Notes
An RNA of 177 nucleotides, treated with 2A3 and DMS and read out base by base. The 2A3 profile rests on 3,013 reads. For 2A3 the reverse transcriptase was SuperScript II with manganese. The reactions ran in a buffer of 150 mM KOAc, 10 mM MgCl2 and 150 mM bicine (pH 8.5), at 24 C. Source: RMDB library TTRDES, as collected in RNAgym.

RNA sequence: GGGAACGACUCGAGUAGAGUCGAAAAGAUAUGGAGUUAGGCUUCCGAUAAGAUAGUGUCGGAAACGACACAUAUCUUUUGACGGAAGCUAACUCCUAAGUCAAACGAUAGAUGUUCGCAUCUAUCGCGCACUGUACAACUUCGGUUGUACAGUGCGAAAAGAAACAACAACAACAAC
Reactivity to 2A3 in 0.01 (KOAc 150mM, MgCl2 10mM, bicine 150mM(pH8.5), 24C), signal-to-noise 2, nucleotides 027 to 126: g000a000u010a020u070g010g010a010g000u010u030a130g290g220c020u050u010c040c100g120a200u090a300a010g030a020u010a010g010u000g000u010c010g020g000a020a000a000c000g010a000c000a000c010a040u010a030u010c000u000u040u090u300g300a270c150g000g000a000a000g010c000u000a000a010c010u000c000c000u000a030a000g000u030c000a070a000a110c030g020a000u010a020g000a000u020g060u150u130c300g010c090a010u010c000u000a000u020c000g030
Reactivity to DMS in 0.01 (KOAc 150mM, MgCl2 10mM, bicine 150mM(pH8.5), 24C), signal-to-noise 1, nucleotides 027 to 126: g000a000u000a200u010g020g000a010g000u020u000a010g050g010c000u010u000c000c000g020a140u030a000a000g000a030u000a010g020u010g010u000c010g010g010a050a000a050c000g010a020c000a000c000a090u000a030u000c000u000u000u020u010g050a250c090g030g010a030a000g000c000u000a000a000c000u000c000c000u000a000a090g020u010c040a080a140a300c030g010a010u000a000g010a030u000g000u000u000c280g030c030a010u000c000u000a000u000c000g030